[RMDB]
RNA sequence: GGGAACGACUCGAGUAGAGUCGAAAAUGGCUUUCAUUAGAGGUGACCAGUUGACAUAAGGUAAAAUCUACAUUGUGCAGCUCUUAUUGUGUGUGAGGGUUGGCCUCAUUAACCAGCGCUAACAAGCUAAUGUAAGCGACUUCGGUCGCUUACAUUAAAAAGAAACAACAACAACAAC
Reactivity to DMS in 0.01 (KOAc 150mM, MgCl2 10mM, bicine 150mM(pH8.5), 24C), signal-to-noise 2, nucleotides 027 to 126: u000g000g000c050u000u000u010c030a070u000u010a080g020a050g020g010u000g010a100c030c020a090g000u030u010g000a120c040a040u000a090a050g000g000u000a020a030a100a080u010c060u040a040c080a080u000u010g030u010g000c000a010g000c020u000c080u000u010a050u000u000g010u030g020u000g020u000g000a060g030g000g030u000u000g000g000c030c000u000c110a100u020u030a070a110c040c050a070g000c040g000c050u000a050a060c160a010a050g020c050
Reactivity to 2A3 in 0.01 (KOAc 150mM, MgCl2 10mM, bicine 150mM(pH8.5), 24C), signal-to-noise 2, nucleotides 027 to 126: u100g050g000c010u050u060u050c060a050u070u130a020g010a030g120g040u060g040a060c020c000a000g000u030u000g020a060c080a050u120a070a100g130g010u130a110a100a000a130u040c020u020a020c000a060u000u100g030u010g060c000a020g000c010u040c030u050u140a210u180u120g070u020g030u030g000u050g050a010g000g020g040u020u200g090g000c010c040u070c000a040u000u000a040a010c000c000a050g010c010g000c040u030a070a120c050a090a000g030c040
Chemical mapping of a 177-nucleotide RNA with DMS and 2A3. For 2A3 the reverse transcriptase was SuperScript II with manganese. Source: RMDB libraries RFM100 and RFMREP, as collected in RNAgym. DMS adducts were read by reverse transcription with MarathonRT. The 2A3 profile rests on 754 reads.